Chemical mapping of a 177-nucleotide RNA with DMS and 2A3.
Source: RMDB library OK1LIB, as collected in RNAgym.

[RMDB]
RNA sequence: GGGAACGACUCGAGUAGAGUCGAAAAGCGUGAGGGAUGACGGCCUUAGGGUUGUAAUCCUCUUUCAGUACCGACGUAUCGCGAGUGUCAGUAGGUACAGAAGAAGGACCGGCCAACUACGUGCCAGAAUUUUAUAUAAAUUCGUUUAUAUAAAAUUAAAAGAAACAACAACAACAAC
Reactivity to DMS in 0.01 (KOAc 150mM, MgCl2 10mM, bicine 150mM(pH8.5), 24C), signal-to-noise 6, nucleotides 027 to 126: g010c040g010u010g010a050g010g010g000a060u010g010a150c130g010g010c010c010u010u020a100g000g010g030u000u010g000u010a100a190u000c010c000u000c000u000u020u000c030a100g010u000a020c000c000g000a080c120g000u000a050u000c030g000c300g000a170g000u000g010u000c060a080g030u000a080g000g010u000a010c010a120g010a010a020g010a060a040g010g000a050c140c050g000g010c020c020a100a130c060u010a050c070g000u010g010c010c020a180g010
Reactivity to 2A3 in 0.01 (KOAc 150mM, MgCl2 10mM, bicine 150mM(pH8.5), 24C), signal-to-noise 4, nucleotides 027 to 126: g050c040g020u060g050a070g000g060g030a060u100g060a070c050g020g010c000c000u050u110a060g060g010g040u010u070g050u110a050a000u000c000c010u010c020u000u050u030c030a030g010u000a000c000c010g030a050c030g080u070a030u160c040g000c060g090a080g080u140g040u050c040a080g040u100a030g100g010u000a010c010a010g030a020a000g020a030a050g030g000a010c040c040g010g000c000c000a040a040c050u080a010c020g030u100g020c000c000a030g090

DMS adducts were read by reverse transcription with MarathonRT. The RNA was probed in 150 mM KOAc, 10 mM MgCl2 and 150 mM bicine (pH 8.5) at 24 C. Reactivities are given for positions 27 through 126. 2A3 is a SHAPE reagent: it acylates the 2'-hydroxyl of flexible nucleotides of all four kinds.